[RMDB]
RNA sequence: GGGAACGACUCGAGUAGAGUCGAAAAUCUGUUUACAAGUUAUCGUUAAGUCCAUGUUUGACUACGAUUCCGUAAACAGAAGCCAGUUUGCGUCAAGUCCAACAUGGACUCUUGGCAGAACUGAUCAUAGGAUUAGUCAGUUCGCUGACUAAUCCUAAAAAGAAACAACAACAACAAC
Reactivity to 2A3 in 0.01 (KOAc 150mM, MgCl2 10mM, bicine 150mM(pH8.5), 24C), signal-to-noise 2, nucleotides 027 to 126: u000c000u000g000u030u000u020a040c050a130a130g030u090u020a040u040c000g000u020u170a090a000g000u000c000c090a150u250g190u110u100u190g050a000c020u050a020c010g000a020u000u020c020c010g030u030a000a010a000c000a010g000a000a000g080c000c000a020g000u000u000u050g110c090g010u000c010a020a010g010u010c020c020a150a100c150a300u220g030g000a000c010u020c040u020u020g010g000c000a010g030a000a000c010u030g000a040u040c040a110
Reactivity to DMS in 0.01 (KOAc 150mM, MgCl2 10mM, bicine 150mM(pH8.5), 24C), signal-to-noise 2, nucleotides 027 to 126: u000c000u000g000u000u000u000a000c020a110a110g000u000u000a000u000c000g030u000u000a050a060g000u000c000c070a160u010g000u010u010u000g000a030c000u000a070c010g000a010u000u000c160c070g020u010a010a000a020c010a010g000a020a140g000c170c020a020g020u000u000u000g010c100g000u000c040a060a020g000u000c000c010a110a140c240a110u010g000g000a010c020u010c100u010u000g000g000c010a300g000a010a020c000u010g000a120u020c100a180